Source: RMDB library 15KLIB, as collected in RNAgym. Chemical mapping of a 170-nucleotide RNA with 2A3 and DMS. The 2A3 profile rests on 3,397 reads. DMS (dimethyl sulfate) methylates the pairing face of unpaired adenines and cytosines. The RNA was probed in 150 mM KOAc, 10 mM MgCl2 and 150 mM bicine (pH 8.5) at 24 C. For DMS the reverse transcriptase was MarathonRT. For 2A3 the reverse transcriptase was SuperScript II with manganese.
[RMDB]
RNA sequence: GGGAACGACUCGAGUAGAGUCGAAAAAAAAGCAAAGAAAGCAACGGGGCUAGCCGACGGGUGUUCCGCCUCCCGAGAGGGGACGAGUGAGGCUUAUCCCGGGGAACCCGGCGAAUCGUCCCCACAUUAGCCAGGUGCUUCGGCACCUGGAAAAGAAACAACAACAACAAC
Reactivity to 2A3 in 0.01 (KOAc 150mM, MgCl2 10mM, bicine 150mM(pH8.5), 24C), signal-to-noise 2, nucleotides 027 to 129: a010a000a000a000g050c070a070a080a030g020a060a110a000g000c010a010a100c020g000g000g000g100c020u030a000g000c000c000g030a020c000g040g000g000u030g070u180u070c000c000g000c020c030u080c010c000c010g080a070g010a080g070g000g000g000a000c000g000a010g010u130g000a060g010g030c000u030u080a080u010c010c000c020g000g000g010g000a000a030c000c000c000g010g000c040g010a000a090u000c000g000u000c000c030c020c010a000c020a060u050u040a000g050
Reactivity to DMS in 0.01 (KOAc 150mM, MgCl2 10mM, bicine 150mM(pH8.5), 24C), signal-to-noise 3, nucleotides 027 to 129: a070a020a020a080g010c100a080a060a090g030a000a000a000g000c020a150a060c120g000g000g000g000c050u010a010g130c020c010g000a040c140g030g000g010u020g030u050u010c000c060g020c160c030u000c010c040c020g030a150g020a090g110g010g000g030a020c000g030a050g040u040g020a120g000g000c090u040u000a020u040c210c010c000g040g000g010g010a030a030c060c020c000g050g050c080g050a120a090u020c020g000u000c010c000c010c000a010c150a040u000u000a070g000